[RMDB]
RNA sequence: GGGAACGACUCGAGUAGAGUCGAAAACGCUGGGUGUGCAAGUCGAUGACAUGUGAUGCUGAAGCGCGCACGGCUAAUCACACGUCAUCGUCACCACACCUGUGCUGAAGCGCGCACGGCAACCGAAAGGUGCGAUAACUGAGUUUCGACUCAGUAAGAACGAGUUUGAGUUCGCUCAAACUCGUUCAAAAGAAACAACAACAACAAC
Reactivity to 2A3 in 0.01 (KOAc 150mM, MgCl2 10mM, bicine 150mM(pH8.5), 24C), signal-to-noise 2, nucleotides 027 to 156: c090g000c000u020g010g020g000u000g000u000g020c150a210a300g000u040c020g010a000u010g000a000c010a040u070g040u010g020a070u120g000c030u110g020a210a070g050c060g000c010g000c100a030c010g040g000c000u080a130a050u080c010a000c000a000c020g000u010c000a000u000c000g030u010c000a020c030c000a000c000a000c000c000u020g020u060g000c030u100g030a140a050g020c100g000c000g000c000a000c000g040g000c010a020a060c030c000g090a160a030a010g060g010u040g030c030g010a020u060a150a000c010u020g000a010g000u090u090u090c120g110a070c000u000c010a000g000u010a050a040